[RMDB]
RNA sequence: GGGAACGACUCGAGUAGAGUCGAAAAGAACAUGGCCAAGCGCUGUGGCAUGUUACAGGGAAGGUCCGGCCGACAGACAGUGACUCCGUUUAGCCUGCUGCCCGCCUCAGUCGACCGUGAACAGCUCUUGGAGGAAGUAGCGGAACAAUGUGGCGUGAAUAAGGGUAAAAUUCGUUUUACCCUUAUUAAAAGAAACAACAACAACAAC
Reactivity to DMS in 0.01 (KOAc 150mM, MgCl2 10mM, bicine 150mM(pH8.5), 24C), signal-to-noise 5, nucleotides 027 to 156: g010a090a060c030a060u000g020g020c000c010a100a090g000c090g030c030u000g040u000g020g000c030a060u000g010u000u010a090c090a130g030g020g010a100a090g020g010u000c020c020g020g030c010c020g000a070c040a090g010a070c030a090g010u010g020a100c020u000c050c100g030u000u000u010a100g020c030c010u010g020c020u010g010c020c020c030g050c020c020u000c040a070g010u000c020g010a110c030c020g000u000g010a070a090c060a150g000c020u000c030u000u000g010g010a090g030g010a070a080g020u010a150g020c050g000g000a100a090c080a070a090u000g030u000g010g010c020g030u000g010
Reactivity to 2A3 in 0.01 (KOAc 150mM, MgCl2 10mM, bicine 150mM(pH8.5), 24C), signal-to-noise 6, nucleotides 027 to 156: g040a020a010c030a020u070g160g000c000c020a050a020g040c050g020c100u080g010u040g060g000c010a020u050g010u040u060a070c070a040g020g020g050a070a060g050g010u050c050c030g020g020c030c020g020a020c020a020g020a010c000a010g030u020g110a070c030u050c060c030g020u030u050u090a030g020c020c010u020g020c020u050g010c020c010c000g000c000c010u050c010a020g060u060c020g040a030c010c010g030u030g030a060a020c020a070g050c010u010c020u110u160g040g020a030g010g030a060a000g010u050a000g000c010g030g020a040a050c050a030a040u090g020u040g050g000c010g010u040g020